[RMDB]
Conditions: 150 mM KOAc, 10 mM MgCl2 and 150 mM bicine (pH 8.5), 24 C. The record gives the reactivity of an RNA of 177 nucleotides to DMS. The DMS profile rests on 639 reads. Reactivities are rounded to 0.1 and cut off at 0 and 3.

RNA sequence: GGGAACGACUCGAGUAGAGUCGAAAAAAUCUGGAACUACGCUACUUGGCAAUUAAAGACGAGAUGAUUUCCAGAGAUGAGGAAAAUGCCGCUCUUAAAAUAGAGGUGGGCGAAUUGCGUGGUGUCAAAUCAGGAUCCGAUUCGUCGGAUCCUGAUUAAAAGAAACAACAACAACAAC
Reactivity to DMS in 0.01 (KOAc 150mM, MgCl2 10mM, bicine 150mM(pH8.5), 24C), signal-to-noise 1, nucleotides 027 to 126: a090a070u020c000u020g040g020a220a050c140u000a040c050g010c050u010a300c070u010u000g000g000c040a080a100u040u000a080a050a030g000a050c060g000a010g010a190u000g000a070u000u010u000c000c020a050g000a170g000a100u000g010a100g010g000a010a050a010a080u000g030c020c010g000c020u000c010u000u010a050a120a160a020u000a000g010a010g000g030u020g000g000g000c020g000a100a060u000u000g000c030g050u020g010g020u000g010u000c170a060